An RNA of 177 nucleotides, treated with 2A3 and DMS and read out base by base. The RNA was probed in 150 mM KOAc, 10 mM MgCl2 and 150 mM bicine (pH 8.5) at 24 C. For 2A3 the reverse transcriptase was SuperScript II with manganese.
[RMDB]
RNA sequence: GGGAACGACUCGAGUAGAGUCGAAAAGAUAUGGAUGCGGUACCCAGCGAGGAUCACAGGUCGGAAACGACCUGUGGGAGCUGGUACCCGCAUCCUAAGUCAAAAGAAUAUCCUUCGGGAUAUUCAACUGUACAUAGAUGUUCGCAUCUAUGUACAGAAAAGAAACAACAACAACAAC
Reactivity to 2A3 in 0.01 (KOAc 150mM, MgCl2 10mM, bicine 150mM(pH8.5), 24C), signal-to-noise 2, nucleotides 027 to 126: g020a020u060a030u130g010g000a000u000g000c000g010g040u030a030c050c060c060a010g020c030g070a300g000g000a000u010c000a000c010a000g020g010u000c010g030g000a070a090a050c000g010a010c010c000u010g000u000g000g000g000a000g000c060u080g010g000u010a010c000c000c020g000c000a000u010c000c010u000a030a000g020u000c020a050a030a050a200g000a010a010u010a000u020c020c000u020u100c300g190g000g000a000u010a000u010u010c000a020a040
Reactivity to DMS in 0.01 (KOAc 150mM, MgCl2 10mM, bicine 150mM(pH8.5), 24C), signal-to-noise 4, nucleotides 027 to 126: g010a030u000a300u000g000g000a000u000g010c020g000g000u000a220c300c030c300a020g030c010g000a050g010g010a040u000c000a010c010a000g000g000u000c000g020g010a110a080a200c020g000a020c000c000u000g000u000g000g000g000a040g030c010u010g010g010u000a040c200c020c030g020c000a020u000c010c000u000a000a090g000u010c030a100a120a170a130g000a010a010u000a000u000c000c000u000u010c200g020g000g010a010u000a010u010u000c000a090a180